Description: Chemical mapping of a 177-nucleotide RNA with DMS and 2A3. The data come from the RNA Mapping Database (RMDB), library OK1LIB. For DMS, 1,663 sequencing reads were counted. Conditions: 150 mM KOAc, 10 mM MgCl2 and 150 mM bicine (pH 8.5), 24 C. For 2A3 the reverse transcriptase was SuperScript II with manganese.
[RMDB]
RNA sequence: GGGAACGACUCGAGUAGAGUCGAAAAUCGUGAGAUGUGGUGCCUCACGCGCUCGAGGCGUCCGUGGUCAGAGAGACCACUGACGCAAAAACUCGAGCGCAAAUAAAUGGCAUUACAUAAAGAAUAACCUGGAGUACCUAUUCGUAGGUACUCCAGGAAAAGAAACAACAACAACAAC
Reactivity to DMS in 0.01 (KOAc 150mM, MgCl2 10mM, bicine 150mM(pH8.5), 24C), signal-to-noise 1, nucleotides 027 to 126: u110c150g050u080g010a100g000a100u000g000u000g000g000u000g000c000c000u000c230a200c130g010c000g010c000u010c000g000a000g000g000c000g060u010c000c080g000u000g000g000u000c010a150g020a240g020a280g010a010c000c000a010c000u000g010a000c000g060c000a030a020a080a050a300c030u030c000g000a000g000c000g010c000a000a100a110u020a060a060a090u050g000g000c000a000u000u000a000c000a000u000a080a060a060g000a090a080u020a090a110
Reactivity to 2A3 in 0.01 (KOAc 150mM, MgCl2 10mM, bicine 150mM(pH8.5), 24C), signal-to-noise 2, nucleotides 027 to 126: u110c040g020u090g120a160g030a130u020g000u000g010g010u010g020c000c000u040c050a090c100g000c000g000c000u000c000g000a000g050g000c000g000u000c010c020g000u000g000g000u000c060a060g150a090g020a010g000a300c000c020a000c010u000g000a000c000g000c000a070a090a020a040a020c000u010c010g000a000g000c000g000c000a010a000a000u080a000a060a030u090g000g000c010a000u000u000a000c000a000u060a030a130a000g120a100a100u210a060a060